[RMDB]
RNA sequence: GGGAACGACUCGAGUAGAGUCGAAAACCUAUCCAAAAUGAGAUCCCAUCUUGCACACUGUGCUAAUUUGAGAUUCUCAUGCCUCCUACUUGGAGAGAUCUGGACUAGAAGUCAGGGCAUCUUACUCAAUACAUUCGUCAGUUCGCUGACGAAUGAACACAUGCCAAUUCUUCGGAAUUGGCAUGUGAAAAGAAACAACAACAACAAC
Reactivity to 2A3 in 0.01 (KOAc 150mM, MgCl2 10mM, bicine 150mM(pH8.5), 24C), signal-to-noise 4, nucleotides 027 to 156: c010c000u020a060u090c050c050a030a050a000a090u030g000a020g000a010u000c010c010c000a000u000c010u010u070g010c000a010c040a080c190u300g020u000g020c080u190a040a080u010u000u000g020a020g000a040u300u020c020u000c000a010u020g030c000c000u010c000c000u090a240c120u160u220g020g000a000g010a010g000a080u010c030u100g020g020a000c020u050a060g040a200a010g090u050c070a020g000g010g060c050a090u060c040u040u080a080c030u060c060a060a120u060a190c000a010u010u000c000g000u000c000a000g010u030u120c170g020c110u000g000a000c000g010a000a000u000g000a000a000
Reactivity to DMS in 0.01 (KOAc 150mM, MgCl2 10mM, bicine 150mM(pH8.5), 24C), signal-to-noise 1, nucleotides 027 to 156: c010c000u020a160u000c060c030a020a030a110a030u000g020a020g000a040u000c000c000c000a030u000c050u000u000g010c000a050c000a240c180u010g010u000g000c010u000a000a040u000u010u010g000a030g010a010u020u000c000u000c010a030u000g010c050c010u020c020c000u010a160c250u010u000g050g040a040g000a120g000a040u010c050u010g030g010a120c040u000a110g010a110a180g010u000c030a060g010g000g000c070a050u010c030u000u010a040c060u010c090a060a100u010a170c010a010u000u000c010g050u010c010a020g010u000u010c300g030c010u000g040a010c000g000a010a010u000g010a110a210
The record gives the reactivity of an RNA of 207 nucleotides to 2A3 and DMS. The reactions ran in a buffer of 150 mM KOAc, 10 mM MgCl2 and 150 mM bicine (pH 8.5), at 24 C. For 2A3 the reverse transcriptase was SuperScript II with manganese. Source: RMDB library M2RFPK, as collected in RNAgym.